Conditions: 150 mM KOAc, 10 mM MgCl2 and 150 mM bicine (pH 8.5), 24 C. An RNA of 177 nucleotides, treated with 2A3 and DMS and read out base by base. For DMS the reverse transcriptase was MarathonRT. Reactivities are given for positions 27 through 126. 2A3 adducts were read by reverse transcription with SuperScript II with manganese. It was measured as part of the RMDB libraries RFM100 and RFMREP.

RNA sequence: GGGAACGACUCGAGUAGAGUCGAAAAACGGUGAUUACGAUCACCGACCCGAUGACGAAGGUGGGCACUCUCCGACUUGAUGAGGAUGUGGGGCGAGGAGCCAGAGGAGCGGACUUACGAGUCCGCAAUGUAAAUAAACUUUCGAGUUUAUUUACAUAAAAGAAACAACAACAACAAC
Reactivity to 2A3 in 0.01 (KOAc 150mM, MgCl2 10mM, bicine 150mM(pH8.5), 24C), signal-to-noise 9, nucleotides 027 to 126: a000c010g000g000u010g010a010u030u090a060c280g070a020u010c000a000c000c000g030a040c000c000c010g080a150u170g060a030c090g070a090a040g100g060u120g030g020g000c010a020c030u020c000u000c020c020g040a050c050u100u150g050a120u140g040a110g120g030a070u090g050u070g040g020g000g030c050g010a040g010g010a020g030c020c020a050g030a050g060g030a030g000c000g000g000a010c000u040u060a040c200g070a010g000u000c000c000g000c000a000
Reactivity to DMS in 0.01 (KOAc 150mM, MgCl2 10mM, bicine 150mM(pH8.5), 24C), signal-to-noise 9, nucleotides 027 to 126: a210c020g010g020u000g010a010u000u010a110c190g020a060u010c000a000c000c000g000a050c010c000c010g010a100u020g010a090c110g010a090a080g000g020u010g010g000g010c050a140c060u010c020u000c030c030g010a080c090u010u010g010a120u020g000a130g010g010a080u010g010u010g000g010g010g000c080g010a080g000g000a130g010c080c030a080g010a120g000g020a140g020c010g000g000a020c000u000u010a110c170g010a060g010u000c000c000g020c010a010